Annotation
Structure probing data (2A3 and DMS) for a 207-nucleotide construct. It was measured as part of the RMDB library OK3TST. The RNA was probed in 150 mM KOAc, 10 mM MgCl2 and 150 mM bicine (pH 8.5) at 24 C.
RNA sequence: GGGAACGACUCGAGUAGAGUCGAAAAUGAUCAUGGAGAAUGCACCUGACACCGUGGUCAACCAGACGAUCGCAUGGGGAUGGAUCAUCCUGAUCAUCUCACUUGCCUUCUUCUAUACCGGCUUUGCGACCGCCCAGGAUAUCGCCGCGAUCCUCGCCAAAGACAGCUACUUCGGUAGCUGUCUUUGAAAAGAAACAACAACAACAAC
Reactivity to 2A3 in 0.01 (KOAc 150mM, MgCl2 10mM, bicine 150mM(pH8.5), 24C), signal-to-noise 2, nucleotides 027 to 156: u070g010a000u000c010a010u050g010g000a070g100a150a160u160g070c090a100c050c040u040g010a020c030a010c050c030g050u010g000g000u030c040a030a040c110c020a030g010a030c070g010a020u030c010g000c040a080u170g030g000g000g040a020u040g100g030a020u000c030a070u100c030c080u070g000a010u030c000a050u010c030u010c010a230c060u020u040g000c000c000u020u050c000u120u000c020u050a130u060a130c010c040g010g010c000u060u090u050g050c060g060a060c040c030g040c010c070c000a010g040g020a040u070a010u130c060g010c030c000g000c010g030a040u070c010c000u080c010g000c000
Reactivity to DMS in 0.01 (KOAc 150mM, MgCl2 10mM, bicine 150mM(pH8.5), 24C), signal-to-noise 1, nucleotides 027 to 156: u000g010a070u010c030a060u000g040g050a070g000a060a160u040g000c020a050c010c080u000g010a230c060a080c010c030g000u000g000g000u010c050a070a210c030c090a110g000a060c140g000a000u000c020g020c030a060u000g010g010g050g000a090u010g000g030a040u000c050a080u000c090c120u010g000a000u000c030a090u000c010u000c030a150c060u000u010g020c030c000u000u000c060u000u000c040u000a160u000a070c080c000g000g040c020u010u000u000g030c000g010a040c010c030g000c030c010c040a180g020g010a070u000a070u000c040g000c030c030g020c040g000a130u000c030c000u000c020g000c220

Values are in units of 0.01, from 0 to 300, in steps of 10. The DMS profile rests on 2,297 reads. For DMS the reverse transcriptase was MarathonRT.